[RMDB]
RNA sequence: GGGAACGACUCGAGUAGAGUCGAAAAAGCGCCUCAGGAUACGUCCUGAGGCGCAUGCUGAUGAUAUUUCUUAGGACGCCUUCUGAAACGACUUUUCGUUUGUGAGAAUAACCAAGAAACUGACGAAGAUCGAAAACCUUUUCGAAGGUUUUCGAUCAAAAGAAACAACAACAACAAC
Reactivity to 2A3 in 0.01 (KOAc 150mM, MgCl2 10mM, bicine 150mM(pH8.5), 24C), signal-to-noise 1, nucleotides 027 to 126: a000g010c010g000c000c000u020c000a050g010g000a010u010a090c290g120u010c000c000u080g000a000g000g020c000g000c000a000u030g030c010u140g000a170u040g050a010u010a130u180u020u020c000u070u050a140g020g030a130c070g070c020c000u030u100c030u110g000a000a000a000c050g030a030c040u090u070u190u140c030g020u000u000u000g050u060g130a030g020a020a020u080a010a000c000c010a020a020g010a000a060a020c010u040g000a040c000g090a280a140